Structure probing data (DMS and 2A3) for a 207-nucleotide construct. For DMS the reverse transcriptase was MarathonRT. High DMS reactivity at an A or C suggests that its Watson-Crick edge is free. Conditions: 150 mM KOAc, 10 mM MgCl2 and 150 mM bicine (pH 8.5), 24 C. Source: RMDB library RNAMAK, as collected in RNAgym.
RNA sequence: GGGAACGACUCGAGUAGAGUCGAAAAGCGUACUACUCCAGGAACUACCAAUUUCCAGUUAGCGAUAAGUCCCAAAUAGGACUUUUGACGCUAACGGAGGAUUGGCCUGGAGUAUCGCAAAACCCGCUAUUCUGAGUUCGCUCAGAAUAGCGGGUAAGUAAGUUUAAAUGUUCGCAUUUAAACUUACAAAAGAAACAACAACAACAAC
Reactivity to DMS in 0.01 (KOAc 150mM, MgCl2 10mM, bicine 150mM(pH8.5), 24C), signal-to-noise 1, nucleotides 027 to 156: g040c020g030u000a000c140u000a000c000u010c000c000a030g020g000a130a080c070u020a300c040c000a020a030u000u000u010c000c000a070g060u000u000a000g020c000g030a150u010a040a020g000u000c000c000c050a050a150a250u000a020g000g010a040c000u000u000u000u000g020a300c070g050c000u000a000a010c010g000g060a010g030g000a010u010u010g000g000c000c000u000g000g000a030g000u010a000u000c020g000c020a070a020a060a120c020c000c000g050c000u000a000u000u000c020u030g000a010g030u000u000c300g010c020u000c000a010g010a010a000u000a010g010c000g000g000g010u000a000a050
Reactivity to 2A3 in 0.01 (KOAc 150mM, MgCl2 10mM, bicine 150mM(pH8.5), 24C), signal-to-noise 3, nucleotides 027 to 156: g000c000g020u060a090c070u000a000c000u010c000c010a010g050g020a100a100c110u180a120c290c000a010a000u040u020u050c000c020a110g000u010u000a000g000c000g010a030u020a050a020g000u020c020c010c020a140a200a120u230a090g020g000a020c000u090u070u070u150g170a100c010g000c000u000a000a000c000g000g000a040g000g040a010u000u000g000g000c000c000u020g000g000a000g000u000a000u020c000g000c010a020a000a040a040c000c000c000g020c000u010a010u000u000c000u000g020a000g020u040u180c190g150c110u010c010a000g000a010a000u000a000g000c000g000g000g000u000a000a000